[RMDB]
RNA sequence: GGGAACGACUCGAGUAGAGUCGAAAAUCACAGGAUGACUUGGCAGAGCAGUGUGGCUGCACUCACCCAGCUCCUCCUCCAAGCGCUUGGUUACCGUGGAAAUGUCGCCACCAGCAGAUGCUGCUGGAUGUUUGCUGAUGUUUGCCCUCAGCUCAUACUACUAUGCACCGUUCGCGGUGCAUAGUAGAAAAGAAACAACAACAACAAC
Reactivity to 2A3 in 0.01 (KOAc 150mM, MgCl2 10mM, bicine 150mM(pH8.5), 24C), signal-to-noise 2, nucleotides 027 to 156: u070c020a000c000a080g150g000a160u120g050a190c000u000u030g000g010c130a030g030a000g080c090a050g000u090g040u100g190g040c030u030g010c140a030c050u270c020a130c000c040c000a000g040c000u060c000c010u000c010c000u010c020c020a060a030g030c010g040c020u000u020g010g010u030u110a040c020c030g040u120g000g030a000a120a000u040g060u000c020g070c010c010a010c020c020a000g030c020a020g140a210u290g150c040u010g000c000u000g080g040a040u010g040u020u210u030g050c070u150g000a010u000g040u000u110u110g180c000c000c000u050c060a090g000c030u010c070a040u150a100
The record gives the reactivity of an RNA of 207 nucleotides to 2A3. Reactivities are given for positions 27 through 156. The reactions ran in a buffer of 150 mM KOAc, 10 mM MgCl2 and 150 mM bicine (pH 8.5), at 24 C. It was measured as part of the RMDB library OK3TST. For 2A3 the reverse transcriptase was SuperScript II with manganese.